[RMDB]
RNA sequence: GGGAACGACUCGAGUAGAGUCGAAAAGCGUACUACUUACUACAAAGGAGACCGAAGAACGUAGGUCUCUAGCGUGUGAGCUCCCAAAUAGGAGCUCAUCGGGCCUACGGGAGGUCUCCAUAAAGGUAAGUAUCGCAAAGAGACGUUCGCGUCUCAAGCUUUGUAAUUGCUUCGGCAAUUACAAAGCAAAAGAAACAACAACAACAAC
Reactivity to 2A3 in 0.01 (KOAc 150mM, MgCl2 10mM, bicine 150mM(pH8.5), 24C), signal-to-noise 1, nucleotides 027 to 156: g000c000g060u050a080c000u000a000c000u010u000a000c050u030a060c090a170a120a040g000g000a010g000a000c000c010g100a240a030g010a040a030c000g010u000a000g000g000u040c050u000c020u030a010g000c090g030u190g000u020g010a000g010c050u010c000c020c000a120a170a050u270a080g010g000a000g000c000u000c000a000u010c010g020g010g030c000c000u010a000c000g020g000g000a050g000g000u000c000u020c000c000a000u000a000a000a000g030g000u000a010a010g020u040a050u210c040g000c000a030a100a000g000a000g000a000c010g010u030u070c250g040c040g070u080c010u000c000a000a040